Description: This 177-nucleotide RNA was probed chemically with 2A3 and DMS. The data come from the RNA Mapping Database (RMDB), library OK1LIB. For 2A3 the reverse transcriptase was SuperScript II with manganese.
RNA sequence: GGGAACGACUCGAGUAGAGUCGAAAAUGACCCAGGUGCAACUCCAGAGGCAAGGCGAGGCGGUCAUCGCCUCGAUCGGCGGCUUCGACCUGGAAUAUGGUGGGGAACGCUUCGGCCGCGACAAUUAAGGAGUCAUGCUGUUCGCAGCAUGACUCCUAAAAGAAACAACAACAACAAC
Reactivity to 2A3 in 0.01 (KOAc 150mM, MgCl2 10mM, bicine 150mM(pH8.5), 24C), signal-to-noise 2, nucleotides 027 to 126: u300g030a120c000c000c010a010g020g040u020g040c000a100a090c000u000c020c000a020g040a000g060g010c070a060a050g030g030c010g000a000g000g000c000g020g010u280c030a070u140c010g040c000c000u000c000g030a020u060c030g030g000c010g000g000c000u000u020c020g140a130c000c000u020g000g060a000a000u160a040u230g000g010u090g010g000g050g000a080a070c000g000c000u080u100c070g030g010c020c000g000c040g110a050c060a050a060u190u160a040
Reactivity to DMS in 0.01 (KOAc 150mM, MgCl2 10mM, bicine 150mM(pH8.5), 24C), signal-to-noise 2, nucleotides 027 to 126: u000g090a160c000c000c030a070g050g030u000g010c060a010a210c030u000c040c000a090g000a180g000g040c010a080a060g000g000c020g040a030g000g070c010g030g040u000c300a160u040c000g000c030c060u000c090g000a000u110c120g000g090c050g000g000c040u000u000c000g000a000c000c010u000g000g000a060a070u050a070u060g000g000u000g010g000g050g000a130a210c050g000c100u000u050c170g000g000c040c040g000c100g070a060c140a020a060u080u000a190